[RMDB]
RNA sequence: GGGAACGACUCGAGUAGAGUCGAAAACAGAAGAAGAUGUCACGGUGCUGCAUCAAACUUCUGAGUGGCUUCAUUAUCGCCUGCCUCCUAACUUUAUACGCCAGCAUCAGGACCCGCUUUGCAUCGGCAUCUAAAGCCAAUUCGUUGGCUUUAGAUGAAAAGAAACAACAACAACAAC
Reactivity to 2A3 in 0.01 (KOAc 150mM, MgCl2 10mM, bicine 150mM(pH8.5), 24C), signal-to-noise 7, nucleotides 027 to 126: c010a000g020a030a010g030a060a020g010a040u020g050u100c030a020c140g030g050u050g010c040u020g000c010a020u000c000a030a250a110c010u020u000c000u010g020a020g070u060g040g000c010u100u060c110a140u070u260a090u230c060g000c030c020u020g020c010c010u030c000c010u060a110a120c030u100u180u120a140u050a080c070g010c030c010a020g030c010a050u030c020a030g030g050a050c020c020c020g040c050u100u090u050g000c000a020u020c020g020g000
Reactivity to DMS in 0.01 (KOAc 150mM, MgCl2 10mM, bicine 150mM(pH8.5), 24C), signal-to-noise 8, nucleotides 027 to 126: c030a040g000a020a020g010a300a300g010a020u000g010u000c070a090c040g020g010u000g010c040u000g000c010a010u000c020a040a160a180c020u000u000c010u000g010a100g020u000g010g000c020u000u000c120a080u000u000a080u000c100g010c030c020u000g010c030c020u010c040c030u000a050a070c100u000u000u000a080u010a110c100g000c040c020a030g000c040a060u000c050a080g010g000a120c020c010c020g010c110u000u000u000g010c030a040u000c040g010g000
Annotation: An RNA of 177 nucleotides, treated with 2A3 and DMS and read out base by base. The 2A3 profile rests on 13,900 reads. Reactivities are given for positions 27 through 126. DMS adducts were read by reverse transcription with MarathonRT. 2A3 adducts were read by reverse transcription with SuperScript II with manganese. The RNA was probed in 150 mM KOAc, 10 mM MgCl2 and 150 mM bicine (pH 8.5) at 24 C.